This 177-nucleotide RNA was probed chemically with DMS. It was measured as part of the RMDB library TTRINS.
RNA sequence: GGGAACGACUCGAGUAGAGUCGAAAAGAUAUGGAUUCGCUAGUGUCGUUGCGAUACGACAUGAAGGCUGUCGGAAACGACAGGUCCUUCAACAGCGUACGCAACGACACUAGCGAAUCCUAAGUCACAAGAGGCUAAUGUUCGCAUUAGCCUCUUGAAAAGAAACAACAACAACAAC
Reactivity to DMS in 0.01 (KOAc 150mM, MgCl2 10mM, bicine 150mM(pH8.5), 24C), signal-to-noise 2, nucleotides 027 to 126: g020a070u000a300u010g010g000a030u000u000c000g000c000u000a020g020u000g040u010c000g000u010u000g000c000g020a230u010a010c020g000a040c120a250u010g010a030a010g000g010c000u000g010u010c000g000g000a120a160a180c030g000a000c010a000g010g000u020c010c000u010u000c000a050a100c270a160g000c010g020u000a020c000g010c020a020a020c000g010a000c010a000c000u000a000g000c000g030a000a000u000c010c000u000a010a060g010u010c050a280